Overview:
An RNA of 177 nucleotides, treated with 2A3 and read out base by base. The reactions ran in a buffer of 150 mM KOAc, 10 mM MgCl2 and 150 mM bicine (pH 8.5), at 24 C. It was measured as part of the RMDB library OK1LIB. The 2A3 profile rests on 1,154 reads.
[RMDB]
RNA sequence: GGGAACGACUCGAGUAGAGUCGAAAAACGGGCAGUGGCGAUGGCAACGCGGCAGCCGCAGGGUCGACUUCUUCGCAGCCGCAACAGACGGGGCACGGGCAAAGAGGGGGUCUCGUUCUGUUGGAAGGGCUAGUAUGCGUUUCGACGCAUACUAGCCAAAAGAAACAACAACAACAAC
Reactivity to 2A3 in 0.01 (KOAc 150mM, MgCl2 10mM, bicine 150mM(pH8.5), 24C), signal-to-noise 2, nucleotides 027 to 126: a000c070g000g010g000c030a080g030u010g030g050c040g080a160u100g030g020c080a100a010c040g000c000g090g000c000a000g070c010c040g100c090a050g070g000g000u030c030g000a060c020u040u000c000u040u040c040g030c000a020g000c010c010g050c000a000a020c010a000g030a010c020g000g000g030g000c000a010c070g040g050g020c050a070a150a040g110a030g010g080g000g000g000u000c000u000c000g010u180u020c010u010g020u000u000g010g050a020a060g090